[RMDB]
Conditions: 150 mM KOAc, 10 mM MgCl2 and 150 mM bicine (pH 8.5), 24 C. The record gives the reactivity of an RNA of 177 nucleotides to 2A3 and DMS.
RNA sequence: GGGAACGACUCGAGUAGAGUCGAAAACUAACCACGUUCGCGUGGUUAGAAAAGCGGCCAGCUCCAGGCCGCCAAAGAAUAUGGAGCACAAGACGAAAGUCAAAAGUAUCUGCUUCGGCAGAUACAACAUUUGAAAGAACUUCGGUUCUUUCAAAUGAAAAGAAACAACAACAACAAC
Reactivity to 2A3 in 0.01 (KOAc 150mM, MgCl2 10mM, bicine 150mM(pH8.5), 24C), signal-to-noise 2, nucleotides 027 to 126: c000u000a000a000c000c000a000c000g020u060u030c170g010c000g120u000g000g010u000u000a000g000a000a030a010a010g010c010g000g000c000c010a050g010c000u000c000c000a000g000g010c020c000g000c000c010a070a080a000g080a010a000u020a020u000g000g000a000g030c000a000c030a000a020g010a000c020g030a120a040a010g000u010c000a060a080a000a030g000u000a000u010c010u000g000c020u040u040c120g120g000c010a000g000a000u000a000c000a010a000
Reactivity to DMS in 0.01 (KOAc 150mM, MgCl2 10mM, bicine 150mM(pH8.5), 24C), signal-to-noise 3, nucleotides 027 to 126: c000u000a010a000c000c000a020c010g040u000u000c190g040c000g050u000g000g000u000u000a020g000a070a060a140a180g010c000g010g010c000c000a140g030c000u000c000c000a020g000g010c000c000g020c010c100a000a070a040g010a020a010u000a050u000g000g010a000g000c010a120c260a080a060g010a000c000g000a140a060a170g010u010c000a070a110a080a130g000u000a000u000c000u000g010c000u000u010c210g020g010c000a010g010a010u010a000c000a090a120